[RMDB]
RNA sequence: GGGAACGACUCGAGUAGAGUCGAAAAUGGAAUGAGGACCUACAAGCUUACUUUUAUACUAGAAAAUAAAAGACUAGAAGAAUCAAGCCUUUGCUCAGAUCAUACUUUGUGAGGUGGGCAAGAGUAGAAAGCCGAACACUUGAACGUGAGAGCGAGAAUUUACGUCCUCAUUCGUGAGGACGUAAAUAAAAGAAACAACAACAACAAC
Reactivity to 2A3 in 0.01 (KOAc 150mM, MgCl2 10mM, bicine 150mM(pH8.5), 24C), signal-to-noise 3, nucleotides 027 to 156: u100g040g010a070a030u100g000a050g020g050a070c000c010u020a030c040a100a090g040c040u100u030a080c000u070u160u080u080a130u080a080c030u030a040g110a120a190a060a030u090a020a070a060a030g040a090c020u040a020g030a120a020g030a100a080u060c050a080a010g000c020c020u060u110u140g020c020u030c010a020g010a130u060c010a020u060a160c120u070u150u080g050u090g000a060g040g080u060g000g000g020c020a020a030g040a010g030u040a020g010a010a050a000g000c000c010g010a080a000c040a010c020u060u120g060a090a000c020g020u020g040a040g000a000g030c000g000a010g070a060
Reactivity to DMS in 0.01 (KOAc 150mM, MgCl2 10mM, bicine 150mM(pH8.5), 24C), signal-to-noise 1, nucleotides 027 to 156: u030g010g010a060a000u000g000a120g020g010a090c020c040u020a040c050a080a130g000c020u000u000a060c020u000u000u000u000a080u010a240c040u000a160g000a160a100a080a110u010a060a020a040a100g010a140c010u000a060g010a110a140g000a120a100u000c040a070a290g010c010c010u000u000u000g020c010u000c010a070g010a060u000c000a040u000a050c190u000u000u000g020u000g000a030g020g000u000g010g000g020c040a020a080g010a020g000u010a100g010a110a040a060g000c030c020g000a090a070c070a020c040u000u050g010a030a070c070g000u000g000a090g010a110g000c000g010a200g000a080
An RNA of 207 nucleotides, treated with 2A3 and DMS and read out base by base. The RNA was probed in 150 mM KOAc, 10 mM MgCl2 and 150 mM bicine (pH 8.5) at 24 C. The data come from the RNA Mapping Database (RMDB), library OK3TST. For DMS the reverse transcriptase was MarathonRT.